Source: RMDB library OK3TST, as collected in RNAgym.
Chemical mapping of a 207-nucleotide RNA with DMS and 2A3.
DMS adducts were read by reverse transcription with MarathonRT.
The reactions ran in a buffer of 150 mM KOAc, 10 mM MgCl2 and 150 mM bicine (pH 8.5), at 24 C.
RNA sequence: GGGAACGACUCGAGUAGAGUCGAAAAACCGAAGUAUGAGUACCUGGAAGCUGACAACGACAUUAACAAGCCGUACAUCAUCCCUGUUCAGGCAUACAUGGACGAUGAGAACAUGUACACUCAGCUCACUCUGACAUACUACGCCGGCGAUAAGACAACUCAUGGGAGUAUUCGUACUCCCAUGAGUAAAAGAAACAACAACAACAAC
Reactivity to DMS in 0.01 (KOAc 150mM, MgCl2 10mM, bicine 150mM(pH8.5), 24C), signal-to-noise 2, nucleotides 027 to 156: a150c010c000g020a030a060g060u000a040u020g030a060g040u010a090c070c010u000g030g020a080a140g020c020u000g010a110c010a070a150c030g010a050c010a110u010u000a120a230c090a080a140g000c000c050g000u000a160c020a080u000c050a130u000c050c010c020u000g020u000u010c040a040g010g050c050a160u000a040c030a060u000g010g010a200c000g020a130u020g020a190g000a070a080c010a040u000g020u000a070c070a100c160u000c020a090g010c020u000c090a110c030u010c040u000g020a080c030a140u000a080c050u000a020c050g010c060c000g020g000c010g000a090u000a100a170g010a140c030a070
Reactivity to 2A3 in 0.01 (KOAc 150mM, MgCl2 10mM, bicine 150mM(pH8.5), 24C), signal-to-noise 2, nucleotides 027 to 156: a000c010c000g020a040a000g050u030a020u030g060a010g080u020a040c020c030u000g000g030a050a000g000c000u020g000a000c040a090a040c140g070a000c020a090u110u120a170a000c070a130a000g060c000c000g080u040a010c010a060u050c000a020u030c010c010c000u030g040u080u050c070a100g060g110c000a060u070a070c050a010u030g000g020a000c010g040a080u180g030a000g000a070a030c030a070u010g000u020a020c010a030c000u030c000a000g000c060u020c000a070c000u050c020u020g010a020c010a010u040a020c020u010a040c070g080c040c000g060g000c010g020a000u030a170a040g090a020c050a050